[RMDB]
RNA sequence: GGGAACGACUCGAGUAGAGUCGAAAAGGCAGUUUCGACUGCCAAAAAGAUAUGGAGAACCUUAGGGAGCGAUCCGUAACAUCGUAAUCGGAAACGAUUACGUGGGAUCGCGAGGAUCUAAAGUUCUCCUAAGUCAAAAAACCGGAUUCGUCCGGAAGAUCCAACUUAUAUUCGUAUAAGUUGGAUCAAAAGAAACAACAACAACAAC
Reactivity to 2A3 in 0.01 (KOAc 150mM, MgCl2 10mM, bicine 150mM(pH8.5), 24C), signal-to-noise 3, nucleotides 027 to 156: g000g000c010a010g000u060u090u270c230g150a050c000u010g010c000c000a000a010a000a000a000g010a010u010a010u030g000g000a010g010a000a000c000c010u010u000a010g000g010g000a020g010c000g000a000u000c000c000g000u000a000a010c010a100u120c000g000u000a000a000u000c000g000g000a000a000a000c000g000a000u010u000a000c000g000u000g010g010g000a000u000c000g000c000g010a010g000g000a000u000c000u000a020a000a010g000u000u000c000u000c000c000u000a000a000g000u000c000a000a010a020a120a050a140c010c010g000g000a030u060u060c150g040u020c090c010g030g000a010a030
Reactivity to DMS in 0.01 (KOAc 150mM, MgCl2 10mM, bicine 150mM(pH8.5), 24C), signal-to-noise 2, nucleotides 027 to 156: g010g020c010a010g010u000u000u010c270g020a090c000u010g020c000c010a000a020a040a130a120g010a040u000a030u000g010g000a040g020a020a010c000c010u000u000a030g010g010g010a020g040c000g010a000u010c000c000g000u000a030a030c100a010u000c010g000u000a010a010u000c000g000g000a040a010a030c010g010a020u000u000a000c000g020u000g000g010g010a010u000c010g020c000g010a040g000g000a030u000c010u000a010a010a020g010u000u000c000u000c000c010u000a000a030g000u010c010a000a090a160a090a110a140c010c020g000g000a120u010u000c290g010u000c000c000g000g030a020a080

Overview: An RNA of 207 nucleotides, treated with 2A3 and DMS and read out base by base. The RNA was probed in 150 mM KOAc, 10 mM MgCl2 and 150 mM bicine (pH 8.5) at 24 C.